[RMDB]
The record gives the reactivity of an RNA of 207 nucleotides to DMS and 2A3. The reactions ran in a buffer of 150 mM KOAc, 10 mM MgCl2 and 150 mM bicine (pH 8.5), at 24 C. 2A3 adducts were read by reverse transcription with SuperScript II with manganese.
RNA sequence: GGGAACGACUCGAGUAGAGUCGAAAAACCUUUGUGUCGCACCCUUAGGACUAUGAAGAUAUAUUGAUCGAAGGACCCAUUGGGUCUUAAUUGAUGUAUAUUGGAGUCCUAAUGUGCUGCGACACUCUGGUAAAAACGUCAGUUUCGACUGACGUAACCCGUAUGUAAAGUUCGCUUUACAUACGGGAAAAGAAACAACAACAACAAC
Reactivity to DMS in 0.01 (KOAc 150mM, MgCl2 10mM, bicine 150mM(pH8.5), 24C), signal-to-noise 2, nucleotides 027 to 156: a020c010c000u000u010u000g020u000g020u020c000g020c010a040c010c020c020u000u000a010g010g010a040c000u000a200u000g000a260a290g000a010u000a010u000a030u000u000g030a240u000c010g000a300a170g020g020a000c000c010c000a270u000u000g030g030g020u000c020u000u000a020a210u000u000g010a260u000g000u010a020u000a040u000u000g030g010a030g010u000c010c010u020a010a010u000g000u000g040c050u000g020c000g020a010c010a000c000u000c030u010g010g030u000a040a060a060a090a030c000g000u000c000a010g030u010u000u000c190g020a120c000u000g010a020c000g000u000a000a040
Reactivity to 2A3 in 0.01 (KOAc 150mM, MgCl2 10mM, bicine 150mM(pH8.5), 24C), signal-to-noise 9, nucleotides 027 to 156: a000c010c000u000u000u000g000u000g000u000c000g010c000a000c010c000c000u000u000a010g010g000a000c010u040a250u300g050a050a020g010a010u010a000u000a010u030u180g130a030u030c020g020a050a030g030g000a000c020c000c060a200u300u300g010g000g060u010c010u070u080a180a120u040u060g000a010u010g010u010a000u000a000u000u020g020g040a000g000u000c000c000u000a000a000u020g000u040g050c170u000g000c000g000a000c000a000c000u000c000u000g000g010u090a120a050a030a010a010c000g000u000c000a000g010u010u050u220c210g110a030c000u000g000a000c000g000u010a010a020